[RMDB]
An RNA of 177 nucleotides, treated with 2A3 and read out base by base. 2A3 adducts were read by reverse transcription with SuperScript II with manganese. The RNA was probed in 150 mM KOAc, 10 mM MgCl2 and 150 mM bicine (pH 8.5) at 24 C. The data come from the RNA Mapping Database (RMDB), library OK1LIB.
RNA sequence: GGGAACGACUCGAGUAGAGUCGAAAAUCAUGCAGUCGUAUUGCUUCCGUAUCGUGACGCUCUCUUUCUUUUAAUGACAGAGCUUUUUGCAUGAAAUUCAUUAAAGUUGAAAUUAUUUGAAGCAUACCACCGAUCCACCGUUCGCGGUGGAUCGGUGAAAAGAAACAACAACAACAAC
Reactivity to 2A3 in 0.01 (KOAc 150mM, MgCl2 10mM, bicine 150mM(pH8.5), 24C), signal-to-noise 1, nucleotides 027 to 126: u000c000a000u110g020c000a020g090u060c000g030u050a070u170u040g060c000u000u000c010c010g030u090a290u300c030g040u240g050a010c080g000c000u000c000u000c000u000u200u000c200u000u130u020u270a090a000u010g020a000c010a070g030a000g000c000u000u170u000u260u200g000c040a140u000g010a120a090a070u150u000c020a030u000u160a120a030a060g140u080u130g250a070a150a020u130u180a080u000u200u200g030a000a000g020c000a050u070a090c000
Values cover nucleotides 27 to 126.